[RMDB]
RNA sequence: GGGAACGACUCGAGUAGAGUCGAAAACACCGCCCAUUGCGGGGCAGGUUACCGAGGUGGGUUGUAGCCCGUAAAGGAAUGCUGGACAUUUGCUUUAACCAUUUCAAAAGCAGUCGACGAUCCUAGGGUGAUCCCUGCCUGAUGAGGGAUUGAAAAAUCAGUAAAUCCAUUUCGAUGGAUUUACUGAAAAAGAAACAACAACAACAAC
Reactivity to 2A3 in 0.01 (KOAc 150mM, MgCl2 10mM, bicine 150mM(pH8.5), 24C), signal-to-noise 4, nucleotides 027 to 156: c060a010c000c000g000c000c000c000a080u080u300g060c150g000g000g020g020c050a140g080g000u050u090a040c010c020g030a030g000g010u040g000g030g000u040u110g010u050a030g020c000c000c010g020u100a140a150a030g030g030a060a030u180g050c090u180g100g000a040c020a100u120u100u130g000c030u060u020u050a120a150c100c050a270u070u190u180c120a100a080a010a010g000c010a010g040u020c030g060a080c070g000a030u000c010c010u030a050g000g010g010u050g010a010u030c000c000c000u000g010c010c020u030g010a030u070g000a050g100g000g060a030u160u200g050a120a060a030a060a020
Reactivity to DMS in 0.01 (KOAc 150mM, MgCl2 10mM, bicine 150mM(pH8.5), 24C), signal-to-noise 3, nucleotides 027 to 156: c020a130c000c020g010c010c010c030a190u010u000g020c140g030g000g030g050c060a040g010g010u010u000a070c000c030g000a090g000g030u000g010g020g030u000u010g010u000a300g000c010c020c020g000u000a080a120a100g020g000a110a090u000g020c020u010g050g030a070c020a170u000u010u000g040c000u000u010u000a100a170c110c110a120u010u010u000c070a080a070a060a080g020c010a100g020u000c000g010a060c040g020a140u000c010c010u000a290g010g010g010u000g000a130u010c080c010c000u000g010c020c030u000g000a070u010g010a130g000g020g000a080u000u000g000a010a050a090a160a190
The data come from the RNA Mapping Database (RMDB), library OK3TST.
This 207-nucleotide RNA was probed chemically with 2A3 and DMS.
For DMS, 5,929 sequencing reads were counted.
Reactivities are given for positions 27 through 156.
Conditions: 150 mM KOAc, 10 mM MgCl2 and 150 mM bicine (pH 8.5), 24 C.